[RMDB]
RNA sequence: GGGAACGACUCGAGUAGAGUCGAAAAACGACUACUACGGUAGUCGACUGUGACUUGCAGAGCUGUGCUCCAAUAUGAGAGAUGGCCAUGCACCCGUGUCUCGGUGCAAGGACUGGAGGUGGCAGAACCGACAGCUUGCAUUCGUGCAAGCUGUCGGAAAAGAAACAACAACAACAAC
Reactivity to DMS in 0.01 (KOAc 150mM, MgCl2 10mM, bicine 150mM(pH8.5), 24C), signal-to-noise 1, nucleotides 027 to 126: a090c030g010a010c010u000a000c010u040a100c110g010g010u000a000g000u000c000g010a040c050u010g000u010g000a110c060u000u000g000c020a080g000a140g020c000u000g000u020g000c030u000c020c000a160a070u030a080u000g000a060g000a100g040a060u000g000g030c110c080a100u000g000c030a010c180c000c070g060u020g000u000c060u020c120g000g050u010g000c050a040a000g010g020a100c010u000g010g010a000g000g030u020g000g020c020a000g010a190a100
Reactivity to 2A3 in 0.01 (KOAc 150mM, MgCl2 10mM, bicine 150mM(pH8.5), 24C), signal-to-noise 2, nucleotides 027 to 126: a000c000g000a000c000u000a010c000u020a000c120g100g030u080a000g000u000c020g000a010c000u020g010u080g140a010c000u010u040g000c050a010g030a050g090c030u020g100u140g140c000u000c040c020a140a170u280a300u300g100a070g010a020g030a090u070g030g000c000c030a040u060g000c040a040c000c020c050g070u080g110u050c070u040c010g010g010u030g000c020a070a070g040g020a060c000u020g050g010a000g000g030u030g000g040c040a000g070a110a050

Overview:
Chemical mapping of a 177-nucleotide RNA with DMS and 2A3. The reactions ran in a buffer of 150 mM KOAc, 10 mM MgCl2 and 150 mM bicine (pH 8.5), at 24 C. DMS adducts were read by reverse transcription with MarathonRT. For 2A3 the reverse transcriptase was SuperScript II with manganese.